[RMDB]
RNA sequence: GGGAACGACUCGAGUAGAGUCGAAAAUACCUCUAUCUCUUGUUCGUGGUAGUGGUCGUCGUGGUUUAACUCGUCGUAGUUUUCUAUUUGUCUCGGAUUAAGCCAAAUCUUAUAACCGAAAUCCUUAAACAAUAAAAGUAAAGAACCUACGGUUAGAACGCAAAAGACGAUUCGUCGUCUUUUGCGUAAAAGAAACAACAACAACAAC
Reactivity to 2A3 in 0.01 (KOAc 150mM, MgCl2 10mM, bicine 150mM(pH8.5), 24C), signal-to-noise 2, nucleotides 027 to 156: u060a000c010c000u000c030u010a060u040c010u060c050u140u180g070u180u170c070g020u060g010g000u040a040g020u050g030g000u030c060g020u070c040g000u040g030g110u020u050u140a060a030c020u000c000g030u010c030g010u050a030g010u020u100u070u120c010u000a130u110u120u140g040u010c040u010c070g000g080a010u020u020a040a040g040c050c050a060a030a150u070c040u090u110a100u010a040a030c020c000g070a080a100a070u190c080c000u110u090a100a130a090c020a010a000u170a220a150a050a040g050u120a090a290a020g040a020a000c050c020u010a000c010g000g120u010u000a040g130a120